Source information
An RNA of 177 nucleotides, treated with 2A3 and DMS and read out base by base. For 2A3, 4,541 sequencing reads were counted. The RNA was probed in 150 mM KOAc, 10 mM MgCl2 and 150 mM bicine (pH 8.5) at 24 C. 2A3 adducts were read by reverse transcription with SuperScript II with manganese.
RNA sequence: GGGAACGACUCGAGUAGAGUCGAAAAGGUCGUCUUUUCGAAGACGACCACUGUCGUUCCCAAAACUUUUCGUAACAUGUCGAAAGACAUGCUGAAACAGAAUUGGUGUGUGUUUCGACACACACAAGUGAUCUGUGUGAUUCGUCACACAGAUCACAAAAGAAACAACAACAACAAC
Reactivity to 2A3 in 0.01 (KOAc 150mM, MgCl2 10mM, bicine 150mM(pH8.5), 24C), signal-to-noise 3, nucleotides 027 to 126: g000g000u010c000g000u010c000u030u030u060u130c180g090a000a000g000a000c000g000a000c000c000a010c000u020g000u000c000g000u020u000c010c000c000a040a000a000a000c000u030u020u010u030c000g030u030a040a020c010a010u010g020u000c000g020a070a050a010g010a000c000a010u000g000c010u050g050a050a030a030c100a110g160a170a180u140u170g100g000u000g000u010g000u000g010u000u080u100c270g050a000c020a000c010a000c000a000c000a010a020
Reactivity to DMS in 0.01 (KOAc 150mM, MgCl2 10mM, bicine 150mM(pH8.5), 24C), signal-to-noise 2, nucleotides 027 to 126: g000g030u000c000g010u000c000u000u000u010u010c140g000a010a000g020a020c000g000a000c010c010a000c070u010g000u000c000g010u010u000c010c000c000a060a050a080a140c120u000u000u000u000c010g030u000a060a100c010a000u000g000u010c000g000a130a140a220g000a010c000a000u000g040c000u000g010a020a030a070c180a100g000a070a090u000u000g000g000u010g000u000g000u000g000u000u000u010c160g020a050c000a000c020a000c030a000c000a030a080